[RMDB]
RNA sequence: GGGAACGACUCGAGUAGAGUCGAAAAUGUCACACAGUAGCGAGGGAAGCAAUUAAUUGCAUCUACACCAAGCUCAAGGCUUGGAUUUCGACUAGUGUCGAGUCGUUCCCACUCGCUACGCCCACAACGCUACCACUUUAUUCGUAAAGUGGUAGCGAAAAGAAACAACAACAACAAC
Reactivity to DMS in 0.01 (KOAc 150mM, MgCl2 10mM, bicine 150mM(pH8.5), 24C), signal-to-noise 1, nucleotides 027 to 126: u020g050u000c260a080c180a130c140a020g040u000a000g020c000g010a050g030g000g000a010a100g030c050a020a040u000u000a080a120u010u010g000c020a080u000c060u000a090c140a300c000c000a000a010g000c010u000c240a130a110g010g000c000u000u010g000g000a120u000u000u000c010g000a000c000u000a030g010u000g000u000c010g030a010g000u000c000g000u020u000c000c000c000a000c000u000c010g020c000u000a010c010g010c080c010c010a020c210a090a170
Conditions: 150 mM KOAc, 10 mM MgCl2 and 150 mM bicine (pH 8.5), 24 C. Structure probing data (DMS) for a 177-nucleotide construct. It was measured as part of the RMDB library M2PK90. High DMS reactivity at an A or C suggests that its Watson-Crick edge is free.